[RMDB]
RNA sequence: GGGAACGACUCGAGUAGAGUCGAAAAUGCUGCAGUGUCGCAGAAAGGGAUUGUAGAGAUGCAUUCUCAAUUAGAUUGUAUAUGGUUACGUGCGACAGAUACUGGUGAGGCCGGGCUUCUCGAAGAAGGGUUUAUAUAUCUUCGGAUAUAUAAACCCAAAAGAAACAACAACAACAAC
Reactivity to DMS in 0.01 (KOAc 150mM, MgCl2 10mM, bicine 150mM(pH8.5), 24C), signal-to-noise 5, nucleotides 027 to 126: u020g010c030u010g000c030a070g020u000g010u000c020g020c020a050g010a070a110a170g000g000g000a010u000u010g030u000a010g000a160g010a150u010g020c020a030u000u010c000u010c030a040a120u020u020a080g010a140u010u030g010u010a050u020a080u020g010g030u010u030a050c060g010u010g000c030g000a020c020a050g000a080u010a050c040u000g000g010u010g010a060g000g010c040c050g000g000g000c060u000u010c010u000c060g010a070a090g000a130a120
Reactivity to 2A3 in 0.01 (KOAc 150mM, MgCl2 10mM, bicine 150mM(pH8.5), 24C), signal-to-noise 5, nucleotides 027 to 126: u140g000c020u000g030c040a050g030u020g040u110c020g000c040a010g110a100a020a010g010g020g000a010u010u030g030u050a020g000a000g010a090u060g020c010a020u050u000c000u000c000a000a070u140u120a100g100a140u060u120g090u090a130u030a040u190g160g100u100u040a040c070g050u090g040c020g010a000c000a010g030a020u100a050c070u050g060g000u100g030a070g020g030c020c000g020g020g000c000u010u010c040u030c030g050a050a030g040a040a090